[RMDB]
RNA sequence: GGGAACGACUCGAGUAGAGUCGAAAAAGGUCAGUGUUAUCAUCCCCACUGGGUUAGGGAAGGGAGACUCAGAGAGGUCAGUUAUUUUCCUGCAGCUGGAUAUCAGCAGGUGGAGUCACAUCCUGAAAUCUAUGUACCAGGUCCUGUGCAAGAUAUAGUGGAGUGAGUAUUUCGAUACUCACUCCACAAAAGAAACAACAACAACAAC
Reactivity to 2A3 in 0.01 (KOAc 150mM, MgCl2 10mM, bicine 150mM(pH8.5), 24C), signal-to-noise 1, nucleotides 027 to 156: a020g220g000u040c050a070g060u020g080u180u090a120u150c050a080u050c010c000c030c000a000c010u000g030g030g000u050u050a080g080g060g030a000a050g100g020g000a130g010a010c000u020c050a060g000a000g020a040g140g000u090c010a010g000u080u020a040u100u120u060u060c000c110u040g040c000a000g020c040u020g060g130a060u080a100u240c070a010g000c010a010g010g040u000g150g000a060g080u130c020a040c020a080u060c050c000u010g000a000a010a010u030c020u030a060u240g030u010a010c020c000a000g000g110u020c020c000u000g000u020g110c050a030a030g040a020u120a040u130a110
This 207-nucleotide RNA was probed chemically with 2A3. 2A3 adducts were read by reverse transcription with SuperScript II with manganese. The RNA was probed in 150 mM KOAc, 10 mM MgCl2 and 150 mM bicine (pH 8.5) at 24 C.